[RMDB]
RNA sequence: GGGAACGACUCGAGUAGAGUCGAAAAGAUAUGGAGCCACGAGUUCAUCGAUCUGGUCGGUCGGAAACGACCGCCAGGGAGAACUCGUGGCUCCUAAGUCAAAGGCACGUGGUUCGCCACGUGCCAAUCAUUAUACUAUCUUCGGAUAGUAUAAUGAAAAAGAAACAACAACAACAAC
Reactivity to DMS in 0.01 (KOAc 150mM, MgCl2 10mM, bicine 150mM(pH8.5), 24C), signal-to-noise 5, nucleotides 027 to 126: g000a050u000a300u000g000g000a020g020c000c000a000c000g010a030g010u000u000c010a300u000c260g010a050u010c000u000g010g000u010c040g040g010u000c000g000g010a060a100a220c010g030a010c000c000g010c010c000a010g000g000g010a030g010a000a000c000u000c010g020u000g000g010c000u000c000c000u000a000a050g010u010c020a100a140a190g010g000c020a000c000g030u000g000g010u000u010c270g020c000c000a010c000g020u000g010c000c000a010a010
Reactivity to 2A3 in 0.01 (KOAc 150mM, MgCl2 10mM, bicine 150mM(pH8.5), 24C), signal-to-noise 2, nucleotides 027 to 126: g020a030u100a030u170g000g040a010g060c000c010a010c000g000a010g010u000u060c080a250u300c060g050a070u000c020u000g040g160u300c230g010g000u020c010g010g020a110a030a070c030g000a000c020c010g000c020c010a000g020g020g010a010g020a020a000c010u010c000g000u000g000g020c060u000c010c000u000a000a000g010u000c000a010a010a070g020g020c000a010c070g040u010g000g070u060u100c280g100c160c000a010c000g000u020g000c000c000a000a010
An RNA of 177 nucleotides, treated with DMS and 2A3 and read out base by base. For DMS, 9,214 sequencing reads were counted. The reactions ran in a buffer of 150 mM KOAc, 10 mM MgCl2 and 150 mM bicine (pH 8.5), at 24 C. 2A3 adducts were read by reverse transcription with SuperScript II with manganese.